The data come from the RNA Mapping Database (RMDB), library OK2TRN. Structure probing data (2A3 and DMS) for a 177-nucleotide construct. For 2A3 the reverse transcriptase was SuperScript II with manganese. 2A3 is a SHAPE reagent: it acylates the 2'-hydroxyl of flexible nucleotides of all four kinds. The reactions ran in a buffer of 150 mM KOAc, 10 mM MgCl2 and 150 mM bicine (pH 8.5), at 24 C.
RNA sequence: GGGAACGACUCGAGUAGAGUCGAAAAGUCACUGUGGGAGGUGCUGAAUGGCACUGGGCAGAAAUAACAGAGUCAGGGUCCACCCUUUGCAUAGGUUGUGUCCGUGCGGAUGUCCCAUGGAUGGUCAACAACAUAGGGAUUUCGAUCCCUAUGUUGUAAAAGAAACAACAACAACAAC
Reactivity to 2A3 in 0.01 (KOAc 150mM, MgCl2 10mM, bicine 150mM(pH8.5), 24C), signal-to-noise 1, nucleotides 027 to 126: g020u040c020a000c080u020g000u050g030g070g010a090g040g030u050g000c070u060g140a270a230u210g030g000c000a020c040u000g000g020g000c040a020g160a100a070a030u200a080a030c040a020g070a010g130u060c010a010g060g000g000u040c000c000a070c040c000c000u040u060u110g050c050a060u080a150g090g010u100u130g080u130g010u060c030c010g000u030g060c040g040g020a070u090g060u110c000c020c010a020u060g070g010a060u030g020g030u090c000a020
Reactivity to DMS in 0.01 (KOAc 150mM, MgCl2 10mM, bicine 150mM(pH8.5), 24C), signal-to-noise 6, nucleotides 027 to 126: g010u000c050a070c030u000g020u000g000g010g010a170g010g020u000g010c040u000g000a100a110u010g010g000c020a030c030u010g010g010g000c070a070g000a080a070a080u010a080a100c070a060g000a140g010u000c060a070g010g000g000u000c070c060a080c050c030c030u000u010u000g010c090a070u010a060g000g020u010u000g010u010g010u000c010c020g020u010g010c080g020g010a130u010g000u000c010c000c010a070u000g010g010a090u000g010g000u000c090a090